[RMDB]
RNA sequence: GGGAACGACUCGAGUAGAGUCGAAAAGAUAUGGAUAGGCAACAGCGAUGAUAUCGGAAACGAUAUAUCGACAUGCCUUAUCCUAAGUCAAAAGGUCUCGAUGGGUGUUCGCACCCAUCGAGACCAACCUACAUGCACGGUUCGCCGUGCAUGUAGGAAAAGAAACAACAACAACAAC
Reactivity to DMS in 0.01 (KOAc 150mM, MgCl2 10mM, bicine 150mM(pH8.5), 24C), signal-to-noise 1, nucleotides 027 to 126: g020a020u010a300u020g000g000a000u000a040g010g020c000a040a090c300a200g000c020g000a010u060g000a020u000a000u000c000g000g000a170a060a270c000g010a020u000a010u010a030u010c000g000a040c150a240u010g000c000c010u000u000a020u000c000c000u000a080a080g020u010c020a040a130a100a100g020g000u000c000u000c010g000a010u000g000g050g010u000g010u000u000c280g020c010a030c000c000c000a000u000c000g010a000g000a010c000c000a010a000
Reactivity to 2A3 in 0.01 (KOAc 150mM, MgCl2 10mM, bicine 150mM(pH8.5), 24C), signal-to-noise 1, nucleotides 027 to 126: g020a010u040a060u250g000g000a000u000a050g010g050c030a060a040c060a300g090c050g050a000u300g100a000u010a000u010c000g040g000a060a090a020c010g000a000u010a000u010a010u000c040g070a070c040a000u080g000c010c000u030u030a010u020c000c000u000a110a020g030u040c040a100a060a000a110g050g020u030c010u000c020g000a000u000g090g000g080u000g070u110u200c300g010c140a020c000c060c000a020u000c020g040a000g000a000c010c000a000a010

Conditions: 150 mM KOAc, 10 mM MgCl2 and 150 mM bicine (pH 8.5), 24 C. An RNA of 177 nucleotides, treated with DMS and 2A3 and read out base by base. For 2A3 the reverse transcriptase was SuperScript II with manganese. Values cover nucleotides 27 to 126. For DMS the reverse transcriptase was MarathonRT. The data come from the RNA Mapping Database (RMDB), library TTRDEL. Reactivities are rounded to 0.1 and cut off at 0 and 3. The 2A3 profile rests on 1,453 reads.